[RMDB]
RNA sequence: GGGAACGACUCGAGUAGAGUCGAAAAACUGCUAAAACUGUUUUAAGUACGGCGGUCGUUAUGCUAAGUACCGUUACUCCCUUCUUGGCGGAACGGAUCUACCAACAGUUUCACAGUGGCAGUGUCAAACAUCAGACCACUUCGGUGGUCUGAUGUUAAAAGAAACAACAACAACAAC
Reactivity to DMS in 0.01 (KOAc 150mM, MgCl2 10mM, bicine 150mM(pH8.5), 24C), signal-to-noise 1, nucleotides 027 to 126: a050c010u010g000c000u000a080a000a100a050c030u010g000u000u000u000u000a070a120g010u000a070c200g100g000c300g020g030u000c020g010u030u000a050u010g020c000u000a000a030g000u000a100c040c150g010u030u000a100c100u000c090c000c010u010u010c060u000u000g000g000c120g000g020a010a010c080g020g010a070u000c040u000a140c030c080a070a040c040a040g000u000u000u000c080a130c230a080g020u000g000g000c000a030g030u000g000u020c160a070